[RMDB]
Structure probing data (2A3 and DMS) for a 177-nucleotide construct. It was measured as part of the RMDB library OK2TRN. For 2A3, 2,336 sequencing reads were counted. For DMS, 4,338 sequencing reads were counted. In probing experiments dimethyl sulfate is read out at A N1 and C N3, which are open when not base-paired. Conditions: 150 mM KOAc, 10 mM MgCl2 and 150 mM bicine (pH 8.5), 24 C. Values cover nucleotides 27 to 126.
RNA sequence: GGGAACGACUCGAGUAGAGUCGAAAACGGUAGUAGAACAGAUGAUCAAACAACUAAUCGUGUCCAAAUCAUCAAUGGAUAUGGUGUUUAAUUUGUGACAAAACGCUCGAUUUUCUGCAGGCGGCUGCUAACACCGAUUUUUCGAAAUCGGUGUUAGAAAAGAAACAACAACAACAAC
Reactivity to 2A3 in 0.01 (KOAc 150mM, MgCl2 10mM, bicine 150mM(pH8.5), 24C), signal-to-noise 3, nucleotides 027 to 126: c020g000g020u080a020g020u000a020g100a130a010c070a030g060a050u050g010a020u080c060a000a080a070c020a020a060c050u180a110a060u060c030g040u000g010u000c010c020a110a120a110u140c070a030u030c000a060a130u080g020g040a040u030a040u110g030g010u040g030u030u090u070a090a090u030u070u030g030u010g010a010c020a070a100a040a000c030g010c040u000c020g080a040u000u040u090u090c030u050g050c020a040g110g000c060g040g010c040u070g010
Reactivity to DMS in 0.01 (KOAc 150mM, MgCl2 10mM, bicine 150mM(pH8.5), 24C), signal-to-noise 5, nucleotides 027 to 126: c100g020g000u000a060g040u010a090g000a140a090c080a070g010a040u010g020a060u000c040a120a090a030c090a060a070c100u010a090a060u010c080g010u000g020u010c010c020a040a050a070u010c090a040u010c120a110a100u000g000g010a070u000a020u000g010g000u000g010u000u000u010a070a080u010u010u000g010u010g000a080c110a060a060a100a080c130g010c030u000c060g000a100u000u000u010u000c040u000g010c080a060g000g020c090g000g010c070u000g000